[RMDB]
RNA sequence: GGGAACGACUCGAGUAGAGUCGAAAAUCGGAGGAAUAUUCAAUUCUCAGCGGAAGCCAGAAUUUGAAUCCUCUCAUCUUUUAGGAAUCAUUUACUAAGUUUGGAAAGAACUCAGGCAGCACAGGUGUAAGGACAAGUAGUUCGCUACUUGUCCUUAAAAAGAAACAACAACAACAAC
Reactivity to DMS in 0.01 (KOAc 150mM, MgCl2 10mM, bicine 150mM(pH8.5), 24C), signal-to-noise 6, nucleotides 027 to 126: u010c220g000g000a030g010g000a300a080u030a130u010u010c010a010a020u000u000c000u010c300a180g020c010g020g070a170a150g020c010c300a020g000a020a010u010u030u000g000a020a030u010c010c000u000c000u000c150a050u010c040u010u000u010u020a040g000g010a090a130u020c110a060u010u010u010a110c070u010a060a060g020u020u010u000g000g020a090a080a110g010a040a060c030u000c050a040g000g000c040a040g020c060a030c070a030g010g010u020g000
Reactivity to 2A3 in 0.01 (KOAc 150mM, MgCl2 10mM, bicine 150mM(pH8.5), 24C), signal-to-noise 6, nucleotides 027 to 126: u080c010g020g000a020g010g050a030a110u110a060u210u020c000a010a010u010u020c040u010c070a030g000c020g080g110a160a000g000c020c020a010g020a010a000u110u100u140g010a010a000u030c010c000u000c010u010c010a080u050c030u000u110u030u090a060g030g040a050a040u070c050a100u040u120u100a070c050u050a060a110g020u070u100u110g090g030a130a100a050g010a040a000c020u010c040a030g010g030c020a020g030c020a020c010a060g060g010u040g030